[RMDB]
RNA sequence: GGGAACGACUCGAGUAGAGUCGAAAAACCUGCACGGGCACGUCCAAGCGGUACCAGCUCUGCAGAGUGCAGGUGAGGCCCGGCCCGGGCAGGGGCACCAUGGCCUGCUCUCCCUGUCAUCAUGCAGGCCUUACCCACAUUUCGAUGUGGGUAAGGCAAAAGAAACAACAACAACAAC
Reactivity to 2A3 in 0.01 (KOAc 150mM, MgCl2 10mM, bicine 150mM(pH8.5), 24C), signal-to-noise 1, nucleotides 027 to 126: a010c010c000u000g080c030a010c020g000g010g000c070a070c140g070u080c100c090a100a030g030c090g020g010u090a200c020c010a030g030c020u060c030u210g040c040a040g100a100g300u160g010c030a010g030g000u040g030a090g010g010c000c000c000g030g000c000c000c000g000g010g020c010a000g050g000g000g030c040a060c050c050a060u050g070g000c000c000u000g010c020u060c020u040c030c000c020u020g110u070c030a080u060c010a020u120g000c020a010g000
Reactivity to DMS in 0.01 (KOAc 150mM, MgCl2 10mM, bicine 150mM(pH8.5), 24C), signal-to-noise 3, nucleotides 027 to 126: a080c010c000u000g000c000a050c020g000g010g010c000a110c160g000u000c060c060a080a170g020c040g020g000u010a060c020c030a220g020c040u030c030u000g010c130a100g000a100g020u000g000c020a020g010g000u010g000a130g010g010c300c120c040g000g020c010c010c000g010g010g020c010a020g000g000g000g000c130a080c070c060a050u010g010g030c010c020u000g000c010u000c090u000c030c040c000u000g000u000c110a120u000c160a150u000g010c000a030g010
This 177-nucleotide RNA was probed chemically with 2A3 and DMS. Values are in units of 0.01, from 0 to 300, in steps of 10. DMS adducts were read by reverse transcription with MarathonRT.